[RMDB]
RNA sequence: GGGAACGACUCGAGUAGAGUCGAAAAAUUCUCCACUACUACGUGGAGCAGGAAUGCAUCGAAGUCGUACACUCGCGCGUGUACAACAUCAUCCAGCUGGUGCUUUUCCACAACAACGACCAGGCGCAGUAGUGUUCGUAUUCGUACGAACACUACUAAAAGAAACAACAACAACAAC
Reactivity to 2A3 in 0.01 (KOAc 150mM, MgCl2 10mM, bicine 150mM(pH8.5), 24C), signal-to-noise 3, nucleotides 027 to 126: a000u090u020c010u050c000c000a020c010u300a090c030u040a030c120g010u010g000g010a010g010c010a000g020g050a050a020u060g020c000a010u030c050g060a110a010g010u050c030g000u000a000c010a010c020u040c040g040c020g000c030g020u000g000u020a000c010a010a000c010a040u130c010a030u030c050c060a030g030c080u090g040g000u020g000c000u040u030u010u030c040c030a080c030a110a020c030a040a040c050g070a030c000c030a090g130g000c020g000c020
Reactivity to DMS in 0.01 (KOAc 150mM, MgCl2 10mM, bicine 150mM(pH8.5), 24C), signal-to-noise 5, nucleotides 027 to 126: a100u010u010c000u010c000c000a040c010u000a190c220u000a090c220g020u000g020g000a030g030c300a060g010g010a050a030u000g000c000a030u010c020g010a040a080g020u000c090g000u010a020c030a010c010u000c130g020c090g020c120g000u000g000u000a010c010a050a010c010a080u000c100a130u010c130c090a080g010c120u000g010g020u010g000c020u010u000u000u000c000c020a140c110a070a070c110a040a100c090g000a140c060c080a100g000g010c020g020c110